[RMDB]
RNA sequence: GGGAACGACUCGAGUAGAGUCGAAAAACAGAAAAAAGGAGUUUAAAUUAGUUUUGCAAACGGACGGUACUAAAUACCGUCACUUUUACGUCUAACUUAUCGUUAACUCUGCAAAAAGAAAACAAGAAAAACAAGCGUGAGUUCGCUCACGCUUGAACGAGUGCAAACAAUUCGUUGUUUGCACUCGAAAAGAAACAACAACAACAAC
Reactivity to 2A3 in 0.01 (KOAc 150mM, MgCl2 10mM, bicine 150mM(pH8.5), 24C), signal-to-noise 1, nucleotides 027 to 156: a000c040a020g160a000a130a030a040a040a020g040g020a040g000u100u060u100a040a080a040u030u050a010g030u000u050u080u050g030c020a040a080a050c000g030g010a000c000g000g000u010a020c040u210a100a100a170u080a000c000c000g000u000c000a060c000u010u020u050u060a000c070g000u000c030u010a010a010c000u030u020a000u040c040g070u030u010a010a010c010u000c010u020g000c060a050a060a030a000a050g030a080a110a020a020c050a020a060g090a170a110a100a000a000c000a000a000g070c000g000u000g010a010g050u110u040c120g020c090u000c000a000c030g000c000u000u000g000a010a000
Overview
Chemical mapping of a 207-nucleotide RNA with 2A3.